An RNA of 177 nucleotides, treated with 2A3 and DMS and read out base by base.
For 2A3 the reverse transcriptase was SuperScript II with manganese.
For DMS the reverse transcriptase was MarathonRT.
Values are in units of 0.01, from 0 to 300, in steps of 10.
It was measured as part of the RMDB library OK2TRN.

RNA sequence: GGGAACGACUCGAGUAGAGUCGAAAAUAUAAGACUCUCAUAUUAACUCAUAUGGGAUAUUGUGAUGAAAUUUGGAAAUCUUACCAAGAUAACCCUGAAAUGAUGUCAGUGCAAAGGGUGGUGAAUGCUACACGUCCUUUUUCGAAAGGACGUGUAGAAAAGAAACAACAACAACAAC
Reactivity to 2A3 in 0.01 (KOAc 150mM, MgCl2 10mM, bicine 150mM(pH8.5), 24C), signal-to-noise 1, nucleotides 027 to 126: u130a010u030a050a030g030a040c060u020c040u000c000a010u050a050u200u160a200a160c040u030c190a000u040a040u050g000g000g000a000u000a040u040u080g040u030g010a090u090g000a040a130a130u070u080u070g040g000a040a090a030u000c090u070u150a090c040c020a010a010g000a100u100a020a080c010c000c000u020g120a130a070a070u100g030a030u130g060u100c060a050g060u020g180c030a120a130a000g050g000g000u040g000g060u100g050a140a050u120g040
Reactivity to DMS in 0.01 (KOAc 150mM, MgCl2 10mM, bicine 150mM(pH8.5), 24C), signal-to-noise 2, nucleotides 027 to 126: u000a080u000a040a030g010a150c150u000c000u000c030a030u000a010u000u000a080a210c150u000c250a060u030a020u000g010g010g000a040u010a070u000u000g020u010g010a050u010g000a070a060a040u000u000u000g010g010a080a080a070u010c140u010u000a130c070c010a040a100g000a170u010a040a070c000c010c030u000g000a060a070a060u010g000a090u010g000u000c040a040g020u000g020c090a030a060a120g010g000g020u000g000g000u010g000a100a060u000g010